Conditions: 150 mM KOAc, 10 mM MgCl2 and 150 mM bicine (pH 8.5), 24 C. An RNA of 177 nucleotides, treated with 2A3 and DMS and read out base by base. Reactivities are given for positions 27 through 126. For DMS, 1,215 sequencing reads were counted. 2A3 adducts were read by reverse transcription with SuperScript II with manganese.
RNA sequence: GGGAACGACUCGAGUAGAGUCGAAAAGUGCGACAUUUCGAUGUCGCACAAACCCAUAUGGUGGCACCUAACUAAACAAGCCGGGAAAAGCCAGAUGCCAACGUCCUUAGCCCUUCGGGGCUAAGAAACCCUCAUUUGAUUUCGAUCAAAUGAGGGUAAAAGAAACAACAACAACAAC
Reactivity to 2A3 in 0.01 (KOAc 150mM, MgCl2 10mM, bicine 150mM(pH8.5), 24C), signal-to-noise 2, nucleotides 027 to 126: g030u020g030c010g020a000c010a020u060u090u090c210g090a020u010g010u010c000g050c000a000c000a000a000a000c010c000c010a040u060a070u070g050g030u000g010g030c050a170c100c000u030a060a100c030u110a170a120a060c040a110a070g080c060c090g000g000g030a090a140a010a000g020c040c040a010g000a070u120g040c010c040a030a030c050g040u050c030c000u010u000a010g030c000c020c010u000u050c180g020g000g000g000c010u000a000a000g020a000a010
Reactivity to DMS in 0.01 (KOAc 150mM, MgCl2 10mM, bicine 150mM(pH8.5), 24C), signal-to-noise 1, nucleotides 027 to 126: g000u000g010c000g000a010c000a030u000u010u020c140g030a000u000g030u010c000g030c000a000c020a010a100a120c000c000c010a130u000a110u000g010g010u010g000g000c040a070c020c020u000a050a050c050u010a050a090a170c120a060a040g000c060c040g020g000g000a090a080a090a070g020c020c050a020g000a040u000g020c010c050a050a100c070g000u000c210c010u000u000a010g010c000c000c000u000u010c140g010g010g000g010c000u000a000a000g010a000a060